[RMDB]
RNA sequence: GGGAACGACUCGAGUAGAGUCGAAAAAUGACCAUGCUAUGAUCGUACCUCAUACGCGUACUAGACUAGCUAGGGAUCGCGUACCUGAUCACUGAUCAUACUAGCACACAUGAGCGUACGAUAUGUGAGUGUUACUGGUCUUCGGACCAGUAACACUAAAAGAAACAACAACAACAAC
Reactivity to DMS in 0.01 (KOAc 150mM, MgCl2 10mM, bicine 150mM(pH8.5), 24C), signal-to-noise 3, nucleotides 027 to 126: a110u010g010a300c040c040a140u020g000c070u000a080u010g010a020u010c000g000u000a010c020c000u000c000a010u000a030c180g030c040g010u000a040c030u000a000g000a250c200u000a160g020c090u000a050g010g000g000a030u020c000g010c180g050u010a100c300c170u000g010a010u000c000a020c040u000g000a080u020c080a090u000a100c030u010a030g010c030a020c030a000c040a020u000g010a030g010c220g020u000a000c000g040a010u000a030u020g010u010g010
Reactivity to 2A3 in 0.01 (KOAc 150mM, MgCl2 10mM, bicine 150mM(pH8.5), 24C), signal-to-noise 3, nucleotides 027 to 126: a010u130g070a070c010c000a050u120g020c060u160a060u300g040a030u030c000g000u010a010c000c000u000c010a010u050a100c020g000c020g050u030a050c030u000a000g110a130c060u090a080g170c010u010a020g030g040g030a050u050c000g000c030g090u090a090c010c080u060g030a050u040c060a080c300u150g020a060u040c010a020u070a130c040u090a010g050c080a030c010a010c000a110u010g000a000g050c140g030u010a000c020g030a030u000a040u110g070u060g080

Annotation: An RNA of 177 nucleotides, treated with DMS and 2A3 and read out base by base. It was measured as part of the RMDB library OK2TRN. DMS adducts were read by reverse transcription with MarathonRT. For DMS, 1,862 sequencing reads were counted.